RNA sequence: GGGAACGACUCGAGUAGAGUCGAAAACAGGCCGCCGCCCAGGCGCGCAAGCGUGGUUACCAGCCGGUGACGCCAUUCGGGGCGCCGUACUCGGAGCCGGGAGCCGCGGCGGGCUAAUCUGCCCGCCGUGUCGUAUAUCCUUCGGGAUAUACGACACAAAAGAAACAACAACAACAAC
Reactivity to DMS in 0.01 (KOAc 150mM, MgCl2 10mM, bicine 150mM(pH8.5), 24C), signal-to-noise 7, nucleotides 027 to 126: c140a090g010g010c020c010g000c010c020g010c020c010c140a180g010g020c010g010c050g000c230a070a110g010c020g020u000g020g010u000u000a110c010c020a150g010c090c040g010g010u000g000a030c020g000c000c010a200u010u010c190g010g020g010g010c010g010c010c000g010u000a040c070u000c060g020g010a120g020c050c050g010g000g000a110g010c020c030g010c030g000g000c000g010g000g010c010u000a070a100u010c180u000g010c000c000c000g010c110c090
Reactivity to 2A3 in 0.01 (KOAc 150mM, MgCl2 10mM, bicine 150mM(pH8.5), 24C), signal-to-noise 4, nucleotides 027 to 126: c030a010g050g040c000c020g000c010c010g030c030c040c030a080g020g000c010g010c030g000c030a040a040g020c000g010u020g010g030u050u040a110c010c010a030g050c020c030g010g020u020g020a040c020g020c020c010a060u170u230c160g150g010g020g060c010g030c030c020g030u040a050c040u050c140g060g050a080g130c080c040g030g020g030a010g010c020c020g010c010g010g000c050g000g020g010c010u020a030a070u070c050u070g040c000c010c030g030c030c000

This 177-nucleotide RNA was probed chemically with DMS and 2A3. Conditions: 150 mM KOAc, 10 mM MgCl2 and 150 mM bicine (pH 8.5), 24 C. Source: RMDB library OK2TST, as collected in RNAgym. DMS adducts were read by reverse transcription with MarathonRT. The 2A3 profile rests on 8,760 reads.